[RMDB]
Source: RMDB library OK2TRN, as collected in RNAgym. The record gives the reactivity of an RNA of 177 nucleotides to DMS.
RNA sequence: GGGAACGACUCGAGUAGAGUCGAAAAGACACCCCAGGUGCCACACCCUGGGCCUGGUAGUUAAAAAUCAACCCCUGACCUGAUUGGUAUGUUAUCUAUAGAUUACAGACAUUGUAUAGAAAAGCACAAUUGUAGAACUCUUCGGAGUUCUACAAUUAAAAGAAACAACAACAACAAC
Reactivity to DMS in 0.01 (KOAc 150mM, MgCl2 10mM, bicine 150mM(pH8.5), 24C), signal-to-noise 2, nucleotides 027 to 126: g030a140c030a110c090c040c010c030a000g030g070u010g010c020c010a080c180a140c150c110c150u000g000g000g000c040c010u010g000g000u010a060g010u020u020a010a060a100a110a040u010c100a060a110c060c000c010c030u000g030a050c040c050u000g030a130u000u010g010g000u000a040u010g010u010u030a120u000c020u000a030u010a090g000a050u010u000a270c040a050g000a040c120a030u000u010g000u000a030u000a040g010a030a070a110a180g000c080a030c220
Source information: The DMS profile rests on 841 reads.